Source: RMDB library OK3TST, as collected in RNAgym. Chemical mapping of a 207-nucleotide RNA with DMS and 2A3. As a SHAPE reagent, 2A3 marks flexible, mostly unpaired nucleotides at the ribose 2'-OH. The DMS profile rests on 1,958 reads.
RNA sequence: GGGAACGACUCGAGUAGAGUCGAAAAAUAAAGCGAAAUCUAUUUGCAAUAAUAGGUAUAUGCAAAGACCUCCUGAAAUUACAGGAGCAAACUCCUUCCGCAUCUCGACCUAAUUAAGAUCCGUUACUCAACAGUGAUCAGUCAGAUUUUACUGUAAACUGAAAAUUUAGUUCGCUAAAUUUUCAGUAAAAGAAACAACAACAACAAC
Reactivity to DMS in 0.01 (KOAc 150mM, MgCl2 10mM, bicine 150mM(pH8.5), 24C), signal-to-noise 1, nucleotides 027 to 156: a100u020a050a110a200g020c020g040a090a030a020u000c020u000a100u000u000u000g020c060a130a160u000a110a080u000a050g020g000u010a120u010a110u000g040c060a100a160a130g020a120c110c060u020c010c020u000g000a210a120a160u000u000a140c080a010g020g020a070g010c060a020a040a070c030u010c020c030u000u000c050c090g000c050a110u000c040u000c070g010a060c000c050u000a040a110u010u000a090a060g020a060u010c020c030g000u000u000a050c060u000c020a050a080c000a100g030u010g020a040u020c060a060g000u010c070a130g000a070u010u000u010u030a030c020u000g020u000a110a100
Reactivity to 2A3 in 0.01 (KOAc 150mM, MgCl2 10mM, bicine 150mM(pH8.5), 24C), signal-to-noise 3, nucleotides 027 to 156: a010u090a030a040a000g040c010g050a110a040a040u020c030u030a080u050u060u100g050c030a060a040u070a180a050u010a060g020g000u040a080u020a020u150g010c030a030a120a020g050a060c000c000u000c000c000u020g080a180a200a220u200u120a110c000a010g000g020a000g000c000a020a100a050c010u070c010c000u080u050c040c060g030c010a070u030c030u030c110g040a040c000c030u070a100a090u130u020a130a020g040a060u020c030c030g070u030u040a070c080u070c100a070a060c010a050g040u020g080a010u020c010a010g110u020c040a030g020a110u060u070u090u080a050c020u020g110u150a270a130